[RMDB]
RNA sequence: GGGAACGACUCGAGUAGAGUCGAAAAUAGUUUGGCAGCUUAAUGCCAACCUGUUAUCAUUUGUGGCCUACAACAUUUGAUAACGGUCAUUUUAGUAGGAUAUACUCUACCAGCGCCCACUUGUAGAGUGAAUUUAAGGGCUUAGCUUAAUGUGUCUGUACAUGAACUUCUUCGGAAGUUCAUGUACAAAAGAAACAACAACAACAAC
Reactivity to 2A3 in 0.01 (KOAc 150mM, MgCl2 10mM, bicine 150mM(pH8.5), 24C), signal-to-noise 1, nucleotides 027 to 156: u160a000g060u050u060u000g000g010c000a040g030c130u300u300a220a010u070g000c000c010a000a040c010c040u020g060u000u010a000u000c000a010u010u000u000g020u010g070g000c000c000u020a000c000a020a000c000a000u000u010u010g010a000u020a000a020c050g000g100u120c130a130u010u100u120u290a060g000u000a000g000g000a000u000a000u000a010c010u000c000u000a000c010c010a010g020c000g010c070c000c000a040c000u000u000g000u000a000g000a000g010u010g000a050a010u140u030u200a150a200g010g030g000c070u120u200a050g030c070u120u130a010a160u300g060u040g040u030c000u000
An RNA of 207 nucleotides, treated with 2A3 and read out base by base. 2A3 adducts were read by reverse transcription with SuperScript II with manganese. Conditions: 150 mM KOAc, 10 mM MgCl2 and 150 mM bicine (pH 8.5), 24 C. Source: RMDB library ARCHII, as collected in RNAgym.